[RMDB]
Structure probing data (DMS and 2A3) for a 177-nucleotide construct. The reactions ran in a buffer of 150 mM KOAc, 10 mM MgCl2 and 150 mM bicine (pH 8.5), at 24 C. For 2A3 the reverse transcriptase was SuperScript II with manganese. For DMS, 1,570 sequencing reads were counted.
RNA sequence: GGGAACGACUCGAGUAGAGUCGAAAAGAAUUGGUAUGUAAGCUACGGCUUCCGGUAGCUGCGUCACACUUUAAGAGUGUGCAUACUGAGCCGAAGCUCAGCUUCGGUCCCCCAAGGGAAGGGCAAACACGAGGUACGUGUUCGCACGUACCUCGUGAAAAGAAACAACAACAACAAC
Reactivity to DMS in 0.01 (KOAc 150mM, MgCl2 10mM, bicine 150mM(pH8.5), 24C), signal-to-noise 1, nucleotides 027 to 126: g000a220a050u000u000g000g000u000a000u000g020u010a300a120g050c000u090a000c000g000g020c030u000u000c000c000g000g010u000a000g000c040u000g000c010g070u000c040a040c000a020c000u000u010u040a140a070g000a010g000u000g020u000g000c000a000u000a000c000u010g000a000g000c000c020g000a000a010g090c000u140c300a070g040c000u000u000c050g000g010u010c000c000c000c050c040a120a180g000g030g020a070a020g030g060g000c090a040a080a100
Reactivity to 2A3 in 0.01 (KOAc 150mM, MgCl2 10mM, bicine 150mM(pH8.5), 24C), signal-to-noise 1, nucleotides 027 to 126: g090a040a040u020u020g030g000u000a000u000g000u020a010a000g000c000u010a000c000g040g000c000u000u000c040c000g040g000u000a000g000c000u000g000c040g000u010c000a010c000a000c000u070u030u300a300a040g200a020g190u020g000u000g000c010a000u000a000c000u000g000a000g000c000c000g000a000a000g040c000u050c300a040g010c000u030u000c000g000g000u010c020c020c000c000c010a080a120g100g000g000a000a010g000g040g050c110a110a040a000